[RMDB]
RNA sequence: GGGAACGACUCGAGUAGAGUCGAAAAGCAUAGCGUCAAGUUGGUUGACCAGAAGUCUGGUUAGCAAACACAGUAAAACCAAAAGGUUAGACGCACUCUGUGAAAAAGUACGAAAGUACAAAGAUAAUCCUUCCCGAUAAUUCGUUAUCGGGAAGGAAAAAGAAACAACAACAACAAC
Reactivity to DMS in 0.01 (KOAc 150mM, MgCl2 10mM, bicine 150mM(pH8.5), 24C), signal-to-noise 1, nucleotides 027 to 126: g010c140a030u030a090g030c010g050u000c000a160a110g030u010u000g000g010u000u000g030a000c000c000a010g020a300a090g010u000c000u010g030g000u000u000a000g010c000a050a020a020c030a190c200a080g020u030a120a070a060a020c000c000a130a060a120a100g010g010u000u000a080g000a080c020g000c030a010c160u000c020u000g010u000g010a100a080a130a050a070g000u000a000c010g000a060a060a230g030u000a010c010a020a040a060g000a190u000a070a150